[RMDB]
Structure probing data (2A3) for a 207-nucleotide construct.

RNA sequence: GGGAACGACUCGAGUAGAGUCGAAAAUGCUGCAGUCUCUUGGUGUAUUCUAGCUUACGUUCCUGAGGGAGGAAAUCGGACUGAAGCUGUACAUCUUCUUGCAACAGGGUGUGUCAUGGGUUGCUGGACACCUUCUCUAGUAGCUGCCCUUGGGUCACCCCGGUAUCUAGUUCGCUAGAUACCGGGGAAAAGAAACAACAACAACAAC
Reactivity to 2A3 in 0.01 (KOAc 150mM, MgCl2 10mM, bicine 150mM(pH8.5), 24C), signal-to-noise 1, nucleotides 027 to 156: u090g000c000u010g020c000a020g080u010c000u020c020u150u150g080g000u020g040u060a090u050u170c090u090a050g000c000u140u060a050c050g040u010u070c020c020u110g060a130g000g070g000a100g000g070a070a100a120u030c000g050g010a040c010u060g030a030a010g040c050u050g070u060a040c010a000u020c040u070u020c020u050u030g060c040a080a020c010a050g040g010g010u030g010u020g040u080c030a060u100g070g000g000u060u050g030c060u040g040g030a040c010a070c030c000u030u070c000u000c000u030a050g030u060a000g010c050u030g000c000c000c000u050u100g050g000g000u000c020a030
Annotation
Reactivities are rounded to 0.1 and cut off at 0 and 3. 2A3 adducts were read by reverse transcription with SuperScript II with manganese. It was measured as part of the RMDB library OK3TST. The 2A3 profile rests on 794 reads.